RNA sequence: GGGAACGACUCGAGUAGAGUCGAAAACGGACUUGCUUCGGCAAGUCCGAAGGCUGCUGCUACGGCAGCAGCCAACACCUCGCGUGAGCGAGGUGAACGUGAGAACUUCGGUUCUCACGAGGAACACGUACGCGUGUUCCAACAGAUCACGUGAGUGAUCUGAAGAGCAACUUAGGAUUUUAGGCUCCCCGGCGUGUCUCGAACCAUGCCGGGCCGAACCCAUAGGGCUGGCGGUCCCUGUGCGGUCAAAAUUCAUCCGCCGGAGUAACCUGUUAUUCGUAACAGGUAAAAGAAACAACAACAACAAC
Reactivity to DMS in 0.01 (KOAc 150mM, MgCl2 10mM, bicine 150mM(pH8.5), 24C), signal-to-noise 1, nucleotides 027 to 266: c020g020g000a000c000u000u000g000c000u000u010c170g010g020c010a020a010g010u000c000c000g020a040a070g010g020c010u000g030c000u000g000c010u000a060c170g010g040c020a000g020c000a000g030c010c000a040a120c030a010c010c020u020c000g030c000g050u000g000a120g030c000g000a010g000g010u000g000a050a090c020g030u000g000a000g000a000a000c000u000u020c170g030g010u000u000c000u020c000a000c000g020a150g000g000a010a000c000a020c000g000u000a110c190g010c000g030u000g000u000u000c000c000a200a220c030a000g000a020u000c000a010c010g000u030g000a120g030u000g000a000u000c010u000g000a090a050g010a040g000c030a070a100c090u000u010a040g000g010a070u000u000u010u000a080g000g010c020u000c060c050c010c040g000g000c000g010u000g000u010c050u000c230g000a110a180c180c010a000u010g010c000c010g000g010g000c140c100g000a080a050c000c010c020a010u010a020g000g000g000c020u000g030g010c010g000g000u000c000c000c000u000g030u000g000c160g000g000u010c090a030a010a050a040u000u000c070a110u020c100c000g030c000c010g000g020a110g010u010a060
Reactivity to 2A3 in 0.01 (KOAc 150mM, MgCl2 10mM, bicine 150mM(pH8.5), 24C), signal-to-noise 4, nucleotides 027 to 266: c000g000g000a010c000u000u000g000c000u050u060c200g100g000c000a000a000g000u000c000c010g000a000a010g000g000c000u000g010c010u000g000c010u030a020c220g090g040c010a000g010c000a000g000c000c000a000a000c000a000c000c010u000c000g000c010g030u070g060a060g000c000g000a000g000g000u000g000a060a020c000g000u000g000a010g000a000a020c010u080u130c300g140g000u000u000c000u000c000a000c000g000a080g000g000a000a000c010a000c000g010u050a020c270g020c010g140u000g000u000u000c000c000a000a020c010a000g000a000u000c000a000c020g060u080g070a080g000u000g000a030u000c000u000g010a060a020g010a010g010c030a010a120c060u090u090a090g080g060a170u170u140u060u090a060g030g020c010u030c000c000c010c000g000g010c010g020u010g020u000c060u080c290g070a050a040c020c000a000u020g000c000c000g010g000g000c000c010g000a010a010c020c000c000a000u020a010g000g020g000c020u010g010g010c010g000g000u070c000c000c000u020g010u030g040c110g020g010u030c030a010a050a060a150u200u140c030a080u030c000c010g010c010c020g000g010a070g030u090a040